[RMDB]
RNA sequence: GGGAACGACUCGAGUAGAGUCGAAAACUGGCAGUAUCUAUGGAACUGUGGCAGGCUAACUUGUUAGCUUCCAAAUAGAGCAGAAUCUCAGACCCUUCACAGUGCUUGACAAUGAACAACCAAAAAAUGUUUUAGUAUGAAGGAUCAGCUGAAAUUGGCUAUUAUCGUAAUUCGUUACGAUAAUAGCAAAAGAAACAACAACAACAAC
Reactivity to DMS in 0.01 (KOAc 150mM, MgCl2 10mM, bicine 150mM(pH8.5), 24C), signal-to-noise 4, nucleotides 027 to 156: c040u000g020g040c020a040g000u000a060u010c040u000a130u000g030g020a060a070c030u010g000u000g010g020c100a060g020g030c020u000a060a080c060u000u000g030u000u000a110g010c030u010u000c020c030a060a090a150u000a120g010a090g000c070a150g010a060a140u000c040u000c040a090g010a060c030c000c000u010u000c020a060c060a100g000u000g020c050u010u020g000a100c080a050a140u010g020a040a030c060a040a300c070c040a010a010a080a090a110a110u000g010u000u000u000u000a080g040u000a050u000g000a070a030g020g000a030u010c020a140g030c020u010g030a030a050a130u000u000g000
Reactivity to 2A3 in 0.01 (KOAc 150mM, MgCl2 10mM, bicine 150mM(pH8.5), 24C), signal-to-noise 9, nucleotides 027 to 156: c020u020g050g000c010a020g030u080a110u160c040u050a150u230g100g020a040a030c020u050g000u050g080g020c060a020g030g000c010u020a030a020c040u130u160g020u130u050a010g000c000u060u000c010c000a090a100a100u120a060g070a020g010c060a020g060a130a110u040c030u010c070a030g010a080c010c010c000u010u030c020a040c030a070g060u030g070c020u040u060g040a030c040a040a150u150g030a090a060c050a050a100c080c140a070a120a010a020a020a090u050g030u010u060u020u020a030g020u010a050u170g020a030a010g010g010a040u060c040a010g040c010u030g010a040a080a130u160u140g060

Structure probing data (DMS and 2A3) for a 207-nucleotide construct. It was measured as part of the RMDB library OK3TST. DMS adducts were read by reverse transcription with MarathonRT. For 2A3 the reverse transcriptase was SuperScript II with manganese. The 2A3 profile rests on 11,162 reads. Reactivities are given for positions 27 through 156. For DMS, 8,061 sequencing reads were counted.